[RMDB]
RNA sequence: GGGAACGACUCGAGUAGAGUCGAAAACGUCAAAGCCAAUCCCAUCAACAACUCCACACUGAUUGUCAAUGACAACGAUACUCAGGCUUUCCUGGAUAUUAUGUCCGGACGUCAUUUUCUGAGCAGUGUGGAGAAAGUACGUAAGGCUGAAAACAAACAAUUUCUAUGUGUUCGCACAUAGAAAUUGAAAAGAAACAACAACAACAAC
Reactivity to DMS in 0.01 (KOAc 150mM, MgCl2 10mM, bicine 150mM(pH8.5), 24C), signal-to-noise 3, nucleotides 027 to 156: c030g010u000c030a050a110a090g020c010c010a060a130u000c000c000c020a190u000c100a100a120c060a090a160c000u000c010c000a030c010a030c000u000g000a050u000u000g020u000c020a080a070u000g030a040c000a120a110c040g000a080u000a010c030u000c040a010g020g020c300u000u000u010c000c000u000g030g010a010u000a020u000u000a090u010g000u010c060c130g030g020a090c190g010u000c010a030u000u000u000u000c010u010g030a050g000c010a040g010u000g040u000g000g010a000g010a000a010a080g030u000a200c050g020u000a060a060g000g020c000u000g000a110a050a070a090c110a080a120a240
Reactivity to 2A3 in 0.01 (KOAc 150mM, MgCl2 10mM, bicine 150mM(pH8.5), 24C), signal-to-noise 7, nucleotides 027 to 156: c030g040u050c070a110a020a020g010c010c010a020a070u030c000c020c010a050u140c020a010a100c010a020a050c020u000c000c000a000c000a000c000u000g020a090u080u070g010u030c020a070a090u100g010a010c010a050a020c080g040a040u060a080c010u020c060a030g060g010c080u110u120u130c010c010u060g030g010a020u030a080u170u140a110u300g080u050c070c030g080g060a090c090g030u020c010a030u000u030u050u050c050u080g030a030g030c000a000g010u000g000u000g000g000a000g000a000a000a000g000u030a010c080g050u070a090a060g000g010c000u050g050a090a080a000a010c070a020a040a000
Conditions: 150 mM KOAc, 10 mM MgCl2 and 150 mM bicine (pH 8.5), 24 C. This 207-nucleotide RNA was probed chemically with DMS and 2A3. In probing experiments dimethyl sulfate is read out at A N1 and C N3, which are open when not base-paired. For 2A3, 5,789 sequencing reads were counted. 2A3 adducts were read by reverse transcription with SuperScript II with manganese. DMS adducts were read by reverse transcription with MarathonRT. The data come from the RNA Mapping Database (RMDB), library OK3TST.